[RMDB]
RNA sequence: GGGAACGACUCGAGUAGAGUCGAAAAAAAAGAUAUGGAAUGACCUACCCACCUUCGUUCAAGCUGUGAAGCCUCGUCGGAAACGACGAGGUGGAGCUUAACGAAGAGGGUCAUUCCUAAGUCAAAAGUACAAAUAUUGGUUCGCCAAUAUUUGUACAAAAGAAACAACAACAACAAC
Reactivity to 2A3 in 0.01 (KOAc 150mM, MgCl2 10mM, bicine 150mM(pH8.5), 24C), signal-to-noise 4, nucleotides 027 to 126: a000a000a000a030g030a010u040a010u040g000g000a000a000u000g000a000c000c000u060a100c160c090c020a050c020c010u000u000c000g030u010u070c300a020a000g000c000u070g050u010g300a000a010g010c000c010u000c000g000u000c000g000g000a000a000a000c000g000a000c000g010a000g000g010u000g000g000a000g000c010u000u000a000a000c010g000a000a000g000a010g000g000g000u010c000a000u000u000c000c000u000a000a000g000u000c020a080a000a080a110
Reactivity to DMS in 0.01 (KOAc 150mM, MgCl2 10mM, bicine 150mM(pH8.5), 24C), signal-to-noise 5, nucleotides 027 to 126: a060a060a080a120g000a010u000a050u020g010g010a030a000u000g000a000c000c000u000a110c040c080c140a300c030c000u000u000c000g010u000u000c130a000a010g000c010u000g000u010g000a110a300g000c000c010u000c000g000u000c000g000g000a010a000a020c000g000a000c000g010a010g000g000u000g000g000a000g000c000u000u000a020a000c000g000a010a000g010a070g010g000g010u000c000a000u000u000c000c000u000a010a050g000u000c030a100a120a110a130
Annotation
This 177-nucleotide RNA was probed chemically with 2A3 and DMS. For DMS, 5,354 sequencing reads were counted. The RNA was probed in 150 mM KOAc, 10 mM MgCl2 and 150 mM bicine (pH 8.5) at 24 C. For DMS the reverse transcriptase was MarathonRT.